Chemical mapping of a 177-nucleotide RNA with DMS. It was measured as part of the RMDB library RFMREP. Reactivities are given for positions 27 through 126. The RNA was probed in 150 mM KOAc, 10 mM MgCl2 and 150 mM bicine (pH 8.5) at 24 C. For DMS the reverse transcriptase was MarathonRT.
RNA sequence: GGGAACGACUCGAGUAGAGUCGAAAAUCCGGUGGAACCUGCUUGGCUUGGGACCGGAAGACCUGAGGGGUACGUCCGGGGUAGGAGUGAAAUCCCGUAAUCCUGGACGGACCACCGGUGGCGAAAGGAGAGCUAAUUACUUCGGUAAUUAGCUCUCAAAAGAAACAACAACAACAAC
Reactivity to DMS in 0.01 (KOAc 150mM, MgCl2 10mM, bicine 150mM(pH8.5), 24C), signal-to-noise 1, nucleotides 027 to 126: u000c000c000g030g040u000g030g000a140a090c010c010u000g000c100u000u000g010g020c120u000u000g010g000g000a100c010c010g000g070a040a070g000a130c020c010u000g000a300g000g010g000g010u000a030c000g000u010c010c000g010g000g030g010u000a210g000g010a030g010u000g010a130a100a100u030c010c000c270g000u010a170a020u030c000c000u010g010g010a030c000g010g000a060c010c000a030c010c030g000g010u000g000g040c010g000a040a090a120g020